The record gives the reactivity of an RNA of 207 nucleotides to 2A3 and DMS. The data come from the RNA Mapping Database (RMDB), library OK3TST. The reactions ran in a buffer of 150 mM KOAc, 10 mM MgCl2 and 150 mM bicine (pH 8.5), at 24 C. 2A3 is a SHAPE reagent: it acylates the 2'-hydroxyl of flexible nucleotides of all four kinds. Reactivities are given for positions 27 through 156. The DMS profile rests on 3,163 reads.
[RMDB]
RNA sequence: GGGAACGACUCGAGUAGAGUCGAAAAGGGUGAUUGGUUCCGCAAGCUGCUGGCUGGCACGAAGAUGCUGGUCGGCUUCAACAUCAAGUUCGAUCUGCUGCAUGCGCUGCGUGACGAGGACAACUACACGGCAUGGGUCGAGUACGUUGCGAACGGCGAAUCUUGGUACGUUCGCGUACCAAGAUUCAAAAGAAACAACAACAACAAC
Reactivity to 2A3 in 0.01 (KOAc 150mM, MgCl2 10mM, bicine 150mM(pH8.5), 24C), signal-to-noise 2, nucleotides 027 to 156: g040g020g000u070g030a180u060u060g020g030u070u090c070c020g040c100a030a040g040c070u070g000c010u000g020g000c020u040g000g000c030a020c060g140a070a080g110a130u030g010c030u040g000g010u000c020g000g000c000u030u000c080a120a070c000a110u170c060a050a050g060u060u100c030g060a050u020c030u020g020c000u010g020c020a050u070g040c080g040c080u070g000c060g070u020g020a000c050g010a050g080g040a020c000a030a010c040u110a030c020a000c100g030g000c080a100u120g080g060g050u020c000g020a020g030u040a060c100g010u000u030g030c020g050a080a030c010g060g000c000
Reactivity to DMS in 0.01 (KOAc 150mM, MgCl2 10mM, bicine 150mM(pH8.5), 24C), signal-to-noise 1, nucleotides 027 to 156: g030g010g050u000g010a090u000u000g020g010u010u000c000c020g000c080a110a210g030c030u000g000c000u000g030g000c010u000g020g030c030a060c010g000a170a060g020a210u000g010c030u000g000g000u020c010g010g010c020u030u000c020a000a110c070a110u010c040a050a120g010u000u010c050g010a080u010c030u000g010c050u000g000c000a080u000g000c020g000c030u000g000c090g010u000g010a110c060g000a110g000g000a050c050a020a100c020u000a080c060a140c070g030g000c010a190u040g020g020g030u000c040g000a110g040u000a190c140g010u010u000g020c000g010a030a090c030g000g000c220